Annotation: Chemical mapping of a 177-nucleotide RNA with 2A3. For 2A3, 949 sequencing reads were counted.

RNA sequence: GGGAACGACUCGAGUAGAGUCGAAAAUCAAGUGUAGAAUGUCGACUAUCGUGAUAUUGUACACGGAGUAUGUGACGAUAGAUACACUACAUACUCAUUAGUCAGUAGUGUAUAUGAACUGACUGAAGAUAGUAUUGUGAUUCGUCACGAUACUAUCAAAAGAAACAACAACAACAAC
Reactivity to 2A3 in 0.01 (KOAc 150mM, MgCl2 10mM, bicine 150mM(pH8.5), 24C), signal-to-noise 2, nucleotides 027 to 126: u170c120a090a000g000u010g000u000a030g100a240a080u050g070u020c000g070a010c080u300a160u220c150g040u030g050a050u000a010u020u010g110u010a000c060a010c000g030g000a050g020u110a130u180g130u090g110a020c080g030a050u060a110g120a060u100a100c080a040c050u080a010c020a040u120a030c040u020c020a090u120u080a010g010u010c030a000g010u050a010g060u080g000u110a070u030a050u220g030a100a040c050u050g060a040c000u010g000a050a000
Source information
The reactions ran in a buffer of 150 mM KOAc, 10 mM MgCl2 and 150 mM bicine (pH 8.5), at 24 C. 2A3 adducts were read by reverse transcription with SuperScript II with manganese.